[RMDB]
RNA sequence: GGGAACGACUCGAGUAGAGUCGAAAACGCGUUAUACACACAAGGUACUGCUAGCACAUGCCUAACAGAUCUAGGCUACAACACCAUCCACGCUUACAAGAAGAUACCGAUCGAUAGACUGGCAGAUUACAACUUUACCCGAUAUACACCGGAACAGAUCGUCCAGUGUUUUCGAACACUGGACGAUAAAAGAAACAACAACAACAAC
Reactivity to 2A3 in 0.01 (KOAc 150mM, MgCl2 10mM, bicine 150mM(pH8.5), 24C), signal-to-noise 1, nucleotides 027 to 156: c000g070c010g060u220u090a110u070a080c230a000c020a000c040a000a000g000g000u010a100c000u000g020c000u020a020g120c000a050c000a200u080g020c000c010u040a150a110c040a120g120a050u040c020u030a050g000g030c000u170a060c010a170a040c000a050c000c020a000u010c030c000a000c080g030c010u090u110a120c090a120a080g080a010a010g020a080u020a070c020c080g030a110u050c060g000a030u150a030g150a010c000u060g050g000c000a070g010a000u030u060a040c050a290a000c010u110u090u130a130c100c040c010g000a000u020a000u000a110c020a000c110c020g080g030a000a010c020a040g000